Structure probing data (2A3) for a 207-nucleotide construct. It was measured as part of the RMDB library OK3TST. 2A3 adducts were read by reverse transcription with SuperScript II with manganese.
RNA sequence: GGGAACGACUCGAGUAGAGUCGAAAAUGACCAGCGAUGGCCCGCUGACGCUGAAAGACUUCGAACCGCUGCGCCUCGCCAACAUCACGCCGGGCGAACUGGCCGCACUACGCGAAGCGCUGGAUACCAAGACCCGCAGUCUCGAUACGGCUGAAAGCCACCGAUUGGGAUUCGUCCCAAUCGGUGGAAAAGAAACAACAACAACAAC
Reactivity to 2A3 in 0.01 (KOAc 150mM, MgCl2 10mM, bicine 150mM(pH8.5), 24C), signal-to-noise 1, nucleotides 027 to 156: u190g010a090c020c020a000g000c020g090a050u130g100g000c060c040c050g110c150u090g080a070c060g010c000u020g030a080a060a000g070a130c000u060u020c040g040a170a140c100c010g050c160u030g010c040g040c000c000u000c000g020c000c010a090a050c010a060u220c010a030c110g040c070c050g000g030g000c000g000a070a070c060u040g010g020c050c010g020c000a060c050u160a030c070g020c010g000a030a000g030c000g000c000u000g000g030a010u060a150c070c020a030a000g060a100c000c000c030g000c040a030g040u000c060u060c120g120a060u030a240c080g040g000c000u000g000a100a040a000g050